[RMDB]
Notes: The record gives the reactivity of an RNA of 177 nucleotides to 2A3 and DMS. For DMS, 8,211 sequencing reads were counted. It was measured as part of the RMDB library OK1LIB. For DMS the reverse transcriptase was MarathonRT.

RNA sequence: GGGAACGACUCGAGUAGAGUCGAAAACGAUCCAGUGAGUCGCUCUACCAGAGCCCCAUAUGGUGCCUGGACAUUAUGGCGUGCAGCCAUCAGCGUCUUUGUAAAGCACAGCACCAGUGCAGAGCGAGCUAUGAGUAGUGUUCGCACUACUCAUAGCAAAAGAAACAACAACAACAAC
Reactivity to 2A3 in 0.01 (KOAc 150mM, MgCl2 10mM, bicine 150mM(pH8.5), 24C), signal-to-noise 9, nucleotides 027 to 126: c040g030a060u110c050c020a040g050u040g110a050g070u020c000g010c010u010c000u030a080c000c040a020g010a020g070c000c000c010c010a070u100a150u170g010g000u010g000c010c040u030g020g020a020c010a020u080u100a020u060g010g010c040g060u210g120c140a020g000c010c010a010u020c030a020g080c030g070u010c000u060u170u120g160u160a100a110a020g030c030a020c020a040g020c000a010c000c010a000g000u010g010c030a020g000a020g110c050g020a030
Reactivity to DMS in 0.01 (KOAc 150mM, MgCl2 10mM, bicine 150mM(pH8.5), 24C), signal-to-noise 4, nucleotides 027 to 126: c110g010a110u060c100c070a090g020u010g010a080g000u000c040g000c000u000c000u010a120c060c070a150g010a080g020c050c020c010c020a080u040a090u030g000g000u000g000c010c120u000g020g000a050c050a070u010u000a020u000g000g000c020g030u060g010c140a140g010c010c000a010u000c110a080g020c120g000u000c010u000u010u010g010u030a060a110a120g010c090a060c110a110g000c020a020c030c030a050g000u020g010c060a110g010a080g000c030g000a120